RNA sequence: GGGAACGACUCGAGUAGAGUCGAAAAGUUAAGGCUUCGGCCUUAACAAAAAACCGUAGGAUCGUCAGGAGAGGUAGGCUUUCUUUCGAAAGAGGAAAGCCUACUACCCACCUCCUGUCGAUCCUAAACGGAAAAAAGCACCGCUUCGGCGGUGCAACACCAGUAGUUACUUCGGUAACUACUGGUGAAAAGAAACAACAACAACAAC
Reactivity to 2A3 in 0.01 (KOAc 150mM, MgCl2 10mM, bicine 150mM(pH8.5), 24C), signal-to-noise 1, nucleotides 027 to 156: g000u000u020a010a000g000g000c000u020u210c300g010g010c020c010u010u030a000a010c030a000a030a000a000a000a000c020c010g030u020a010g000g000a000u000c000g010u000c000a000g010g000a010g000a010g030g000u000a010g000g000c020u070u000u020c030u170u300u060c090g130a190a050a020g000a000g000g010a000a000a010g000c000c000u000a010c000u000a000c000c000c000a020c000c010u000c000c000u010g000u000c000g000a000u000c000c000u000a000a000a000c000g000g070a120a030a000a020a160a000g050c000a000c070c000g030c070u050u090c300g130g000c010g010g000u010g000c000a000a000